Chemical mapping of a 177-nucleotide RNA with DMS and 2A3. The RNA was probed in 150 mM KOAc, 10 mM MgCl2 and 150 mM bicine (pH 8.5) at 24 C. 2A3 adducts were read by reverse transcription with SuperScript II with manganese. Reactivities are rounded to 0.1 and cut off at 0 and 3. For 2A3, 1,918 sequencing reads were counted. For DMS, 1,822 sequencing reads were counted.

RNA sequence: GGGAACGACUCGAGUAGAGUCGAAAAGAUAUGGACCGGCAAGCUAGAUCGUCGGAAACGAUCGAUCUUGGACCUUGCGGUCCUAAGUCAAAACGAGAGCGGAUCCGUUCGCGGAUCCGCUCUCGAACUACCUUAUCUUCUUCGGAAGAUAAGGUAGAAAAGAAACAACAACAACAAC
Reactivity to DMS in 0.01 (KOAc 150mM, MgCl2 10mM, bicine 150mM(pH8.5), 24C), signal-to-noise 2, nucleotides 027 to 126: g010a050u000a300u010g000g000a000c000c000g020g040c000a010a010g020c010u000a010g010a010u020c020g020u000c000g000g000a070a080a200c010g000a010u010c030g020a020u000c010u010u010g050g000a130c300c010u000u000g010c020g010g010u000c000c010u020a010a030g000u000c030a070a080a100a190c000g010a000g000a030g030c000g050g040a010u000c000c010g030u000u010c240g020c010g000g000a000u000c000c000g010c000u000c000u000c000g010a010a060
Reactivity to 2A3 in 0.01 (KOAc 150mM, MgCl2 10mM, bicine 150mM(pH8.5), 24C), signal-to-noise 1, nucleotides 027 to 126: g000a000u040a040u130g000g010a000c000c050g240g130c040a010a000g020c020u000a000g000a000u000c010g030u000c010g000g160a050a050a000c000g000a050u300c130g010a000u030c000u120u190g040g040a120c000c010u020u000g000c000g010g010u000c000c000u010a020a000g030u000c020a020a020a070a150c010g000a000g010a000g000c000g000g030a020u000c010c030g100u110u090c300g000c080g180g000a000u050c000c000g070c030u000c020u000c010g010a000a000